[RMDB]
RNA sequence: GGGAACGACUCGAGUAGAGUCGAAAAAGGCACUCCAUACCCUACUCCGACUCAAUACGUCACCGUCGUACAGAAUGGUAACAUAUCUCUCCAAAUAUCUGAGCUUGGGUAUACGGGGAAACCCAACAAAAGCAAUUGUGGUUCGCCACAAUUGCAACCCCAUGGAGUAGUUCGCUACUCCAUGGGGAAAAGAAACAACAACAACAAC
Reactivity to 2A3 in 0.01 (KOAc 150mM, MgCl2 10mM, bicine 150mM(pH8.5), 24C), signal-to-noise 2, nucleotides 027 to 156: a000g100g000c050a020c000u030c010c000a020u020a030c000c000c010u020a040c010u010c020c020g030a040c040u020c180a040a200u070a100c040g060u030c050a030c050c030g030u090c040g030u100a120c050a100g100a130a130u060g030g030u070a110a000c010a040u170a160u090c100u020c010u030c130c040a060a200a120u150a100u030c030u010g020a030g030c140u130u070g020g000g010u020a050u030a060c070g010g000g020g010a000a010a050c000c000c010a030a020c040a020a110a010a000g000c000a000a000u000u000g000u010g010g030u080u090c110g050c070c000a010c000a000a000u000u000g040c000a000a010
This 207-nucleotide RNA was probed chemically with 2A3.